Description:
This 177-nucleotide RNA was probed chemically with 2A3. The reactions ran in a buffer of 150 mM KOAc, 10 mM MgCl2 and 150 mM bicine (pH 8.5), at 24 C. For 2A3 the reverse transcriptase was SuperScript II with manganese.

[RMDB]
RNA sequence: GGGAACGACUCGAGUAGAGUCGAAAAUUACCUGAGCCGUAUAGAGCGUUUAGGUCAAGCCAUUAAGAGUGAAUCCAUUACUCAGAUUCAAGAUAUUUAUGCCCAAACGGUUCAUGAAGCUAACGACUAGCUCACGUCGUUUCGACGACGUGAGCUAAAAAGAAACAACAACAACAAC
Reactivity to 2A3 in 0.01 (KOAc 150mM, MgCl2 10mM, bicine 150mM(pH8.5), 24C), signal-to-noise 1, nucleotides 027 to 126: u160u000a220c000c000u030g010a000g060c010c000g040u050a080u110a020g000a040g070c170g000u000u000u150a000g050g000u040c000a110a010g070c000c000a070u070u300a060a240g070a050g060u050g060a000a010u080c110c000a000u130u300a000c130u130c050a000g000a000u010u030c020a040a000g020a040u100a000u090u280u000a020u010g000c000c000c000a120a120a000c010g000g000u040u000c000a070u140g110a020a000g000c000u160a070a000c060g010a010c000